[RMDB]
RNA sequence: GGGAACGACUCGAGUAGAGUCGAAAAUGACGUCGUUUCGACGACGUCAACAUAAAAUCAGCGCUAAAUAAUUAGGAGGCGUUACCGCUGAACGCCUCCAUACGAGAGGGCUAUUCGUAGCCCUCAAGAACGCUUCACUAUUCGUAGUGAAGCGUUCAAAAGAAACAACAACAACAAC
Reactivity to DMS in 0.01 (KOAc 150mM, MgCl2 10mM, bicine 150mM(pH8.5), 24C), signal-to-noise 1, nucleotides 027 to 126: u000g010a050c000g030u000c000g030u000u000u010c160g000a020c020g030a040c000g010u000c000a000a060c140a100u000a100a020a060a150u000c000a000g020c000g040c300u020a000a050a020u000a050a030u000u010a130g000g030a020g000g000c020g030u000u000a090c200c040g000c000u000g000a030a030c030g000c000c000u000c000c000a010u000a010c230g000a120g000a010g000g000g000c000u000a020u020u050c140g000u000a000g000c000c000c020u010c010a020a110
Reactivity to 2A3 in 0.01 (KOAc 150mM, MgCl2 10mM, bicine 150mM(pH8.5), 24C), signal-to-noise 2, nucleotides 027 to 126: u060g000a000c000g000u000c030g000u030u080u080c200g090a000c010g010a000c000g000u000c000a010a000c010a020u250a010a100a020a040u030c010a030g000c050g060c210u080a010a030a060u130a040a100u140u220a160g000g000a010g010g010c000g000u010u010a110c010c020g010c000u000g000a000a000c010g010c000c000u000c010c000a000u060a000c070g030a060g020a000g030g000g000c000u010a020u040u100c170g030u020a000g000c000c000c000u000c000a000a010